[RMDB]
RNA sequence: GGGAACGACUCGAGUAGAGUCGAAAAUGUCCCAGUUUCGACUGGGACAAAAGCAUGAGGAGGAUCAAAGAUCAAAGCCGUCGCUCAUGCGUUAAGACGGCAAAAGGCUAGUGUUCGCACUAGCCAACACCUAUAUUCGGUUCGCCGAAUAUAGGUGAAAAGAAACAACAACAACAAC
Reactivity to 2A3 in 0.01 (KOAc 150mM, MgCl2 10mM, bicine 150mM(pH8.5), 24C), signal-to-noise 6, nucleotides 027 to 126: u070g000u000c000c000c000a010g000u040u050u080c180g090a020c010u010g000g000g000a000c000a010a030a000a000g000c010a000u010g000a010g060g050a040g090g040a070u140c090a140a150a070g090a060u090c060a050a070a030g020c000c000g010u010c010g030c010u020c020a020u030g000c000g000u000u050a040a010g010a010c000g010g010c020a030a060a020a020g000g000c010u000a000g010u010g040u050u060c200g030c090a000c000u000a000g000c000c000a000a000
Reactivity to DMS in 0.01 (KOAc 150mM, MgCl2 10mM, bicine 150mM(pH8.5), 24C), signal-to-noise 5, nucleotides 027 to 126: u000g020u010c000c000c000a010g000u000u000u020c160g010a030c000u000g000g000g010a010c010a010a020a060a110g010c020a000u000g000a010g000g020a160g030g000a090u010c140a070a100a100g010a110u000c100a060a080a140g010c010c010g000u000c010g000c030u000c010a010u000g010c000g010u010u010a090a100g000a020c010g010g000c020a070a060a090a090g000g010c000u000a000g010u000g000u000u010c200g010c010a010c000u000a000g010c000c000a010a050